Record summary: The record gives the reactivity of an RNA of 177 nucleotides to DMS and 2A3. The DMS profile rests on 109,231 reads. The RNA was probed in 150 mM KOAc, 10 mM MgCl2 and 150 mM bicine (pH 8.5) at 24 C. The data come from the RNA Mapping Database (RMDB), library OK1LIB.

RNA sequence: GGGAACGACUCGAGUAGAGUCGAAAACAUGUACGCUUCAAGUUCGGCGGUCGGUCAUUUUCGACUGUGUGGAUAGAGCGUGGCUCGUCCGAUGGGGAUGACAUCGUGGUGGCGUGCCCGCCCACCGUCUAGGCUGGGUCUUCGGGCCUAGUCUAGAAAAAGAAACAACAACAACAAC
Reactivity to DMS in 0.01 (KOAc 150mM, MgCl2 10mM, bicine 150mM(pH8.5), 24C), signal-to-noise 9, nucleotides 027 to 126: c120a080u030g010u020a020c030g010c010u010u010c090a110a130g020u010u000c020g010g000c020g010g010u000c020g000g010u050c270a120u020u010u020u020c020g000a030c010u000g020u000g010u040g010g000a030u000a110g000a030g000c010g010u010g010g020c050u010c040g010u010c050c010g010a090u020g000g000g010g010a060u010g000a070c060a060u020c090g010u010g000g010u010g000g010c180g000u010g000c010c010c020g000c100c000c010a010c020c030g010
Reactivity to 2A3 in 0.01 (KOAc 150mM, MgCl2 10mM, bicine 150mM(pH8.5), 24C), signal-to-noise 9, nucleotides 027 to 126: c060a050u160g040u130a020c020g010c030u070u100c100a180a130g020u040u040c010g030g010c010g000g020u010c020g010g040u070c140a260u070u090u090u150c020g010a010c010u010g030u030g080u160g080g010a040u050a140g040a010g000c020g030u050g040g020c020u020c040g040u010c020c010g060a150u120g050g030g020g060a050u090g040a040c010a040u060c050g070u080g050g040u040g010g000c040g020u050g030c000c000c010g010c000c000c000a010c000c010g020